[RMDB]
RNA sequence: GGGAACGACUCGAGUAGAGUCGAAAAAGCUGCCCAAACAAUUUGGUAGUGGAGGACGAAGGAUGCACCAACCUGUCAGGGUUCUCCUACAUGGAACUUAAAGUUGGAUACAUCUCAGCCAUAAAAAGUGAGAUCCGUCAUUCGUGACGGAUCUCACAAAAGAAACAACAACAACAAC
Reactivity to 2A3 in 0.01 (KOAc 150mM, MgCl2 10mM, bicine 150mM(pH8.5), 24C), signal-to-noise 1, nucleotides 027 to 126: a000g090c100u300g000c000c000c000a000a000a000c000a050a240u100u000u000g000g000u140a000g000u040g140g210a160g080g000a060c090g000a080a000g050g000a140u000g000c070a000c070c000a080a000c000c000u090g030u100c140a120g160g080g070u050u070c120u150c000c000u060a060c000a190u270g030g000a000a000c120u000u000a070a010a010g000u000u000g000g000a100u000a290c000a000u140c000u000c050a000g280c000c000a100u300a040a060a060a000a000